The record gives the reactivity of an RNA of 177 nucleotides to 2A3 and DMS. The DMS profile rests on 8,792 reads. For DMS the reverse transcriptase was MarathonRT.
RNA sequence: GGGAACGACUCGAGUAGAGUCGAAAAUUGCGUUGCUCUCGCCCCACAUUAAGAAGGAUGGGUUGAUUUUUGAUCCGUGUGUGGGUGCCGGAUCGUUGCUAGAGCCUUUUCACUCGGCGGGAUAUCGCCUCUUAACUGUGUUCGCACAGUUAAGAGGAAAAGAAACAACAACAACAAC
Reactivity to 2A3 in 0.01 (KOAc 150mM, MgCl2 10mM, bicine 150mM(pH8.5), 24C), signal-to-noise 3, nucleotides 027 to 126: u070u080g030c010g050u040u140g010c010u010c020u010c020g010c000c010c060c000a070c000a040u200u230a140a110g050a060a030g150g040a040u040g050g020g000u050u080g100a190u080u010u090u100u290g040a020u020c010c030g050u030g010u000g010u070g200g100g050u130g000c000c000g020g010a020u010c030g040u040u120g020c040u070a050g000a030g090c000c000u060u100u040u060c040a070c080u020c010g020g000c030g000g040g020a030u050a050u110c070g000
Reactivity to DMS in 0.01 (KOAc 150mM, MgCl2 10mM, bicine 150mM(pH8.5), 24C), signal-to-noise 5, nucleotides 027 to 126: u000u000g010c070g000u010u000g000c080u000c020u010c130g000c030c010c030c030a060c100a080u000u010a110a110g020a110a090g010g010a050u000g000g010g020u000u000g020a090u010u010u010u010u010g000a020u000c000c020g000u000g030u010g020u010g000g010g020u000g010c100c030g000g000a030u000c020g010u000u000g000c050u000a080g010a090g010c040c040u000u000u000u000c070a090c080u000c080g020g010c020g010g010g010a080u010a090u000c060g010